Notes:
The record gives the reactivity of an RNA of 177 nucleotides to 2A3 and DMS. Reactivities are given for positions 27 through 126. The data come from the RNA Mapping Database (RMDB), library OK2TST. DMS adducts were read by reverse transcription with MarathonRT. The RNA was probed in 150 mM KOAc, 10 mM MgCl2 and 150 mM bicine (pH 8.5) at 24 C. For 2A3 the reverse transcriptase was SuperScript II with manganese. The DMS profile rests on 2,825 reads.

RNA sequence: GGGAACGACUCGAGUAGAGUCGAAAAAAAAAGAAACUAAAGAGUUACAACGUUUAGGUAAUCGUGCUGUAUCUUUAGAAGUAGCUACACGUAUUGCUAUGUCUUUAGCAGAACACGAAGUACAAAACGUGCUAGUACUAUUCGUAGUACUAGCACGAAAAGAAACAACAACAACAAC
Reactivity to 2A3 in 0.01 (KOAc 150mM, MgCl2 10mM, bicine 150mM(pH8.5), 24C), signal-to-noise 2, nucleotides 027 to 126: a010a010a020a020a010g150a050a110a010c110u160a120a040a030g160a070g130u160u080a050c030a190a010c060g030u050u050u090a090g010g060u050a040a030u010c020g000u020g010c030u010g010u060a080u080c020u040u070u000a010g040a050a000g020u050a000g010c020u060a020c130a020c140g110u090a040u130u110g010c000u020a010u030g040u020c010u000u030u020a030g020c060a010g040a080a010c000a000c070g040a130a030g030u030a040c020a010a080a020a010
Reactivity to DMS in 0.01 (KOAc 150mM, MgCl2 10mM, bicine 150mM(pH8.5), 24C), signal-to-noise 3, nucleotides 027 to 126: a030a030a030a020a050g000a120a100a100c050u000a010a040a010g000a090g010u000u010a050c110a090a110c030g010u000u010u000a050g010g030u000a040a020u000c020g020u010g020c070u000g020u010a090u010c010u000u000u000a000g020a050a080g020u000a030g030c020u000a050c150a070c190g020u010a080u000u000g000c010u000a030u000g000u000c090u000u000u000a020g000c180a070g010a040a040c080a020c040g020a020a130g010u010a040c080a050a020a070a070